[RMDB]
RNA sequence: GGGAACGACUCGAGUAGAGUCGAAAAACAAGCAUGUUUUCAAAUGGCACUAUGAGCUGCCAAUGAUGUAUCACCACCAUAUCUCAUUAUUCUCCAGUAAAUGUGAUAAUAAUGUCAUCUGUUAACACUUUAUGUGAUGGUUCGCCAUCACAUAAAGAAAAGAAACAACAACAACAAC
Reactivity to DMS in 0.01 (KOAc 150mM, MgCl2 10mM, bicine 150mM(pH8.5), 24C), signal-to-noise 3, nucleotides 027 to 126: a060c090a090a110g020c130a090u000g010u000u020u000u000c050a050a060a100u000g010g000c000a030c050u000a080u010g000a120g010c210u000g000c040c050a050a080u010g010a040u000g030u010a030u000c030a060c050c050a070c070c010a080u000a050u000c050u000c030a050u000u000a080u000u010c040u000c030c080a110g000u000a050a060a100u010g000u010g020a040u000a040a030u000a020a050u010g010u000c050a020u010c130u000g010u000u020a040a060c110a080
Reactivity to 2A3 in 0.01 (KOAc 150mM, MgCl2 10mM, bicine 150mM(pH8.5), 24C), signal-to-noise 5, nucleotides 027 to 126: a000c050a030a030g120c070a110u090g050u020u090u050u090c050a080a090a100u100g000g020c010a020c060u110a120u300g120a050g040c060u010g010c010c000a010a010u070g030a010u040g030u070a050u050c020a020c110c000a010c000c010a040u020a050u050c030u000c030a010u010u020a020u060u030c030u000c010c010a010g050u140a070a210a220u080g030u080g050a030u010a070a030u060a020a040u040g050u040c030a070u040c090u040g070u110u080a080a020c050a020
Structure probing data (DMS and 2A3) for a 177-nucleotide construct. High DMS reactivity at an A or C suggests that its Watson-Crick edge is free. The RNA was probed in 150 mM KOAc, 10 mM MgCl2 and 150 mM bicine (pH 8.5) at 24 C. Values cover nucleotides 27 to 126.